Structure probing data (DMS and 2A3) for a 177-nucleotide construct.
2A3 adducts were read by reverse transcription with SuperScript II with manganese.
It was measured as part of the RMDB library OK2TRN.
For 2A3, 1,616 sequencing reads were counted.
Values cover nucleotides 27 to 126.
RNA sequence: GGGAACGACUCGAGUAGAGUCGAAAAUAAUCGCGUAUAGCCGAUAUCGCGUAUACGCGCGGCGCUACGUAUAUACGCGUAAUGCUAAUCGGCGCUAAUGCAUUAGCUAUACGUACGGCCGUAGCUAGUGCUUGGAGAGUUUCGACUCUCCAAGCACAAAAGAAACAACAACAACAAC
Reactivity to DMS in 0.01 (KOAc 150mM, MgCl2 10mM, bicine 150mM(pH8.5), 24C), signal-to-noise 2, nucleotides 027 to 126: u000a050a090u010c100g000c010g030u020a030u000a080g000c020c070g000a170u010a100u000c110g000c030g000u000a070u000a030c060g030c000g020c040g030g020c040g030c180u000a020c020g020u000a060u000a020u010a050c070g020c000g040u010a020a030u000g020c010u000a080a110u020c050g000g000c020g010c050u020a060a160u000g000c000a020u000u010a010g000c000u010a090u000a020c020g000u000a070c130g010g040c040c020g030u000a070g000c010u000a050
Reactivity to 2A3 in 0.01 (KOAc 150mM, MgCl2 10mM, bicine 150mM(pH8.5), 24C), signal-to-noise 2, nucleotides 027 to 126: u170a040a070u060c010g000c000g010u060a020u010a030g070c050c040g040a070u070a120u250c050g000c020g030u070a070u000a070c030g040c000g000c010g030g000c100g010c130u020a020c010g030u020a040u020a020u030a050c080g000c000g020u030a050a000u040g040c010u030a090a000u080c070g070g020c020g000c090u060a120a000u150g000c010a020u000u000a010g020c020u020a010u000a030c040g040u010a040c020g100g090c020c000g000u000a010g020c060u080a080